[RMDB]
RNA sequence: GGGAACGACUCGAGUAGAGUCGAAAAGAUGCUAGGAGUGGGGGGCGACCGGAACGAGGAGAAAAGUAAAGAGAGCAACGGGGCUAGCGAGUGGAUGUUCCGCCUCCCCGGGGAGCCGAGUGAGGCUAUACAGAUGGCUUCGGCCAUCUGAAAAGAAACAACAACAACAAC
Reactivity to DMS in 0.01 (KOAc 150mM, MgCl2 10mM, bicine 150mM(pH8.5), 24C), signal-to-noise 4, nucleotides 027 to 129: g010a100u030g020c050u060a080g050g000a080g050u040g020g010g050g010g030g030c000g030a060c060c030g040g020a060a050c000g030a090g020g050a070g030a030a060a060a090g020u040a040a090a110g030a000g010a060g040c060a080a130c040g000g020g040g020c070u020a080g040c080g000a090g030u020g000g000a110u020g050u030u030c000c050g000c040c020u030c030c000c000c040g070g000g010g020a080g040c010c000g020a070g050u060g010a070g030g030c000u000a060u020a110
Reactivity to 2A3 in 0.01 (KOAc 150mM, MgCl2 10mM, bicine 150mM(pH8.5), 24C), signal-to-noise 3, nucleotides 027 to 129: g030a030u060g050c040u050a010g040g070a090g050u140g000g000g000g000g000g040c010g030a040c000c010g000g020a000a000c030g020a050g040g060a010g020a040a150a020a000g120u140a050a110a030g100a000g000a020g030c010a010a050c060g010g000g060g000c050u050a040g040c000g040a030g010u050g040g040a050u100g020u110u010c010c000g020c000c000u010c010c000c000c000g000g010g000g020a050g000c000c000g020a020g050u110g010a020g030g000c030u030a010u020a020
The record gives the reactivity of an RNA of 170 nucleotides to DMS and 2A3.
The RNA was probed in 150 mM KOAc, 10 mM MgCl2 and 150 mM bicine (pH 8.5) at 24 C.
The DMS profile rests on 15,081 reads.
For DMS the reverse transcriptase was MarathonRT.
For 2A3 the reverse transcriptase was SuperScript II with manganese.
Reactivities are given for positions 27 through 129.